RNA sequence: GGGAACGACUCGAGUAGAGUCGAAAAGCCACACGAGCCAACCGGCUAAGACAGCUGUCAACAGACCUAACCAGACUAACAGUUGGCGGGCUUCAUUCGUUUGUGGUAGCACUGAUUGAUCUGGACGUAUUGCCGCGGAUGAUGGUGUCUGAGUCGAAUAUGCUCUCCCUUUCGAGGGAGAGCAUAUAAAAGAAACAACAACAACAAC
Reactivity to 2A3 in 0.01 (KOAc 150mM, MgCl2 10mM, bicine 150mM(pH8.5), 24C), signal-to-noise 1, nucleotides 027 to 156: g050c000c000a020c000a000c030g080a050g090c000c060a150a160c130c200g000g050c040u010a000a020g050a000c040a020g000c020u100g000u090c010a010a010c010a080g100a110c010c100u100a130a130c000c060a020g010a000c010u040a010a140c100a000g010u140u100g110g000c110g000g100g010c000u050u060c000a040u080u130c000g090u050u070u250g030u070g000g000u000a000g070c040a000c050u050g110a210u150u100g110a160u040c070u110g030g000a040c010g030u060a060u030u210g030c020c020g060c080g040g000a020u010g000a000u040g020g030u040g000u050c060u000g010a020g030u010c000g020a040
Source: RMDB library OK3TST, as collected in RNAgym. An RNA of 207 nucleotides, treated with 2A3 and read out base by base. The reactions ran in a buffer of 150 mM KOAc, 10 mM MgCl2 and 150 mM bicine (pH 8.5), at 24 C. For 2A3, 513 sequencing reads were counted.